[RMDB]
RNA sequence: GGGAACGACUCGAGUAGAGUCGAAAAGAAGAGCAGUCAGAUAAUCUUGUGCAGUAUGAAUGCUCGUAACUCCAUGGCACAAGUAGAUGUAGAUAACUUUAAUCUCACAUAGCGGAGGAGCCGCAGAGGCUAUCAGCUCAUUCGUGAGCUGAUAGCCAAAAGAAACAACAACAACAAC
Reactivity to 2A3 in 0.01 (KOAc 150mM, MgCl2 10mM, bicine 150mM(pH8.5), 24C), signal-to-noise 2, nucleotides 027 to 126: g120a070a030g000a000g000c000a010g040u060c010a000g000a080u020a130a130u140c000u060u120g030u050g010c080a040g030u060a020u040g060a070a000u000g040c020u000c030g000u020a080a000c020u000c020c020a010u080g050g000c000a000c060a020a000g000u020a000g040a030u110g050u170a000g020a060u000a050a020c010u010u000u080a150a070u000c000u050c000a120c060a120u110a000g000c000g000g000a250g000g010a020g020c000c000g010c010a030g050a030
Reactivity to DMS in 0.01 (KOAc 150mM, MgCl2 10mM, bicine 150mM(pH8.5), 24C), signal-to-noise 2, nucleotides 027 to 126: g050a090a060g000a010g000c010a000g030u000c030a070g000a120u020a180a170u000c000u030u000g000u000g020c030a110g000u000a000u030g000a010a000u040g000c050u000c100g000u070a040a090c010u000c000c130a000u020g020g000c000a000c000a000a000g000u030a050g000a000u000g000u020a040g000a040u040a240a160c260u000u020u010a140a100u000c000u020c210a030c260a020u000a180g010c150g000g000a150g000g000a080g000c000c000g000c090a180g000a180
The data come from the RNA Mapping Database (RMDB), library OK1LIB.
Chemical mapping of a 177-nucleotide RNA with 2A3 and DMS.
2A3 adducts were read by reverse transcription with SuperScript II with manganese.